RNA sequence: GGGAACGACUCGAGUAGAGUCGAAAACCACGAUUCGUCGUGGAAAAAAGAUAUGGACGAGAGCAAGUCGUUGUGGUACGAAGAACUCGGAAACGAGGGAGUACCACUACGAUGAUGACCUCUCGUCCUAAGUCAAAAAGCUAACUUCGGUUAGCAAUACAUCCACUUGGUUCGCCAAGUGGAUGUAAAAAGAAACAACAACAACAAC
Reactivity to 2A3 in 0.01 (KOAc 150mM, MgCl2 10mM, bicine 150mM(pH8.5), 24C), signal-to-noise 3, nucleotides 027 to 156: c000c000a010c010g000a030u130u170c260g020u010c030g020u190g050g000a000a100a000a010a060a000g070a030u030a040u160g000g000a000c000g000a010g000a010g000c040a140a220g010u010c000g000u010u010g000u010g010g000u000a000c010g150a230a080g000a090a050c000u030c010g010g050a070a040a070c000g000a010g000g010g020a020g000u000a000c000c000a010c000u000a000c000g000a000u030g010a050u120g040a030c010c000u000c000u000c000g000u000c000c000u000a000a000g010u000c020a000a000a070a170a000g010c000u010a000a000c000u070u080c180g050g000u000u010a010g000c000a000a000
Reactivity to DMS in 0.01 (KOAc 150mM, MgCl2 10mM, bicine 150mM(pH8.5), 24C), signal-to-noise 1, nucleotides 027 to 156: c000c030a010c000g000a060u000u010c270g000u010c000g040u000g000g000a000a000a030a070a070a290g000a090u000a300u000g000g010a040c000g020a080g000a050g070c020a050a290g040u000c020g020u000u000g030u000g030g000u010a060c020g080a150a150g010a130a230c010u000c000g010g000a100a050a240c000g050a020g010g020g010a300g000u000a000c000c000a050c000u000a020c020g000a000u000g000a090u000g000a040c300c000u000c020u000c000g010u000c000c000u000a000a030g000u000c110a110a140a060a210a070g020c000u000a010a010c010u000u000c300g030g000u000u010a010g020c020a040a090